An RNA of 177 nucleotides, treated with 2A3 and DMS and read out base by base. The RNA was probed in 150 mM KOAc, 10 mM MgCl2 and 150 mM bicine (pH 8.5) at 24 C. For DMS the reverse transcriptase was MarathonRT. It was measured as part of the RMDB library TTRDEL.
RNA sequence: GGGAACGACUCGAGUAGAGUCGAAAAGAUAUGGAACUUCGGGAGCCUGAUGUCGGAAACGACAUUCCGGGCGAGGAUCGAGUUCCUAAGUCAAAGUGCAGCUUAUGGUUCGCCAUAAGCUGCACAACUAUCCUGUAUUCUUCGGAAUACAGGAUAGAAAAGAAACAACAACAACAAC
Reactivity to 2A3 in 0.01 (KOAc 150mM, MgCl2 10mM, bicine 150mM(pH8.5), 24C), signal-to-noise 5, nucleotides 027 to 126: g010a010u050a050u110g020g000a020a000c010u300u300c180g010g000g000a010g000c000c010u040g020a010u010g010u000c010g010g010a040a020a040c000g010a010c010a010u240u040c150c060g010g010g000c030g030a180g000g000a010u010c010g010a000g000u000u000c000c000u010a070a010g030u010c050a130a100a060g000u010g000c000a000g010c000u020u020a000u000g020g080u050u260c300g060c090c010a000u000a000a010g000c000u000g000c000a000c000a000a000
Reactivity to DMS in 0.01 (KOAc 150mM, MgCl2 10mM, bicine 150mM(pH8.5), 24C), signal-to-noise 4, nucleotides 027 to 126: g000a030u000a240u010g010g000a020a000c000u010u000c000g010g000g010a060g020c000c000u010g010a030u000g000u000c000g030g010a070a070a100c000g020a020c000a020u010u010c200c120g010g000g010c010g000a110g010g000a090u000c010g000a080g000u000u000c000c000u010a010a090g000u000c030a060a090a140g010u000g000c000a000g000c010u000u010a010u000g000g010u000u010c250g010c000c000a010u000a000a020g020c000u010g000c000a000c000a000a090